[RMDB]
RNA sequence: GGGAACGACUCGAGUAGAGUCGAAAAGACACGCUGGACAAUCUAGUAUUCACAGUGUUUCCAUCAGAGGAUUCGGAGAUGGAUGAAAUCUUUGGGCAUUUGGUGAAUCCAAAGUUCAUGUUAAGACCCGCGCCGACGAUAGUGUAAUAAGUGGUGGCAUGACACUUAGCUUCGGCUAAGUGUCAUGAAAAGAAACAACAACAACAAC
Reactivity to 2A3 in 0.01 (KOAc 150mM, MgCl2 10mM, bicine 150mM(pH8.5), 24C), signal-to-noise 1, nucleotides 027 to 156: g090a020c060a030c010g040c060u000g050g000a010c050a010a130u020c080u130a080g070u120a200u040u070c030a000c020a080g020u000g020u020u100u000c000c010a010u030c050a070g070a080g040g100a090u150u040c010g040g000a060g050a180u060g000g040a000u010g080a050a100a110u010c000u000u020u070g000g000g000c060a190u110u110u210g130g000u120g060a060a040u010c010c000a020a000a060g030u000u000c010a010u060g040u160u100a000a000g080a050c000c000c000g020c010g010c010c000g000a040c060g010a030u030a200g110u070g000u070a070a160u150a260a130g040u040g110g030u020g060g000